[RMDB]
RNA sequence: GGGAACGACUCGAGUAGAGUCGAAAAGUCGGUGUGCAGGGCCACUCCGCGGCACCGCAGCGGGCGGCCGUGUCGGCGCUGCCGAUGGCCCAGGUCGGCACGCAGCUGUUGGCGUCCACGGUGUCGAGGAAGAUACGGAAUUCGUUCCGUAUCUUCCAAAAGAAACAACAACAACAAC
Reactivity to DMS in 0.01 (KOAc 150mM, MgCl2 10mM, bicine 150mM(pH8.5), 24C), signal-to-noise 3, nucleotides 027 to 126: g020u000c040g020g010u000g020u000g010c040a120g020g010g020c060c030a040c030u000c030c040g000c010g000g010c000a020c020c010g030c160a160g010c100g010g020g010c030g030g030c020c020g010u000g020u000c050g010g000c000g000c080u000g000c000c030g010a060u010g010g010c060c040c020a130g000g000u000c000g010g000c000a030c080g020c050a080g040c020u000g010u000u000g000g010c020g000u010c050c080a170c020g000g010u000g020u000c020g000a120
Reactivity to 2A3 in 0.01 (KOAc 150mM, MgCl2 10mM, bicine 150mM(pH8.5), 24C), signal-to-noise 1, nucleotides 027 to 126: g080u060c010g010g000u000g020u020g080c100a190g100g060g100c040c000a030c020u050c020c040g030c000g010g010c020a020c000c030g060c000a070g080c120g040g000g020c060g050g080c030c000g010u060g050u060c060g050g000c080g000c090u030g000c000c010g120a120u080g020g000c010c000c010a010g000g060u000c000g000g020c020a020c060g040c010a120g000c020u120g080u210u120g080g000c000g050u030c030c020a020c040g030g010u010g000u050c010g000a010